RNA sequence: GGGAACGACUCGAGUAGAGUCGAAAAUCCCAGGUGAUCUGCUCGGCCUGGGCGUACCGCCCUGCGUCCUUCUCCUGCUCGGAGACCCUGAGGGGGAGCGUGCGGAUGAUGUGCUCGAGGUGCGCGGCCCCUGGUCAUGUUUCGACAUGACCAGGGGAAAAGAAACAACAACAACAAC
Reactivity to 2A3 in 0.01 (KOAc 150mM, MgCl2 10mM, bicine 150mM(pH8.5), 24C), signal-to-noise 2, nucleotides 027 to 126: u020c020c000c000a000g010g090u080g030a120u020c020u090g050c050u080c070g050g040c010c000u030g000g010g000c020g050u070a120c040c060g020c020c000c010u000g030c020g070u050c000c000u040u000c010u010c010c010u060g190c000u070c060g070g000a160g060a120c020c010c000u040g040a140g000g040g000g000g000a020g020c030g000u030g010c020g020g010a040u060g010a040u120g110u060g020c020u010c060g050a020g040g030u080g030c050g010c020g030g040
Reactivity to DMS in 0.01 (KOAc 150mM, MgCl2 10mM, bicine 150mM(pH8.5), 24C), signal-to-noise 1, nucleotides 027 to 126: u010c000c000c000a080g000g010u010g020a070u010c050u000g020c030u000c040g010g010c030c050u020g000g000g020c070g040u020a060c130c070g000c010c030c010u010g000c040g000u000c040c050u010u000c010u000c010c010u000g000c090u000c080g000g000a210g000a120c180c020c040u000g000a040g000g030g010g000g030a130g010c230g000u000g000c010g000g000a070u000g010a140u000g020u000g020c050u010c040g000a170g000g000u000g010c080g000c020g010g000
The record gives the reactivity of an RNA of 177 nucleotides to 2A3 and DMS. Source: RMDB library OK2TST, as collected in RNAgym. DMS adducts were read by reverse transcription with MarathonRT.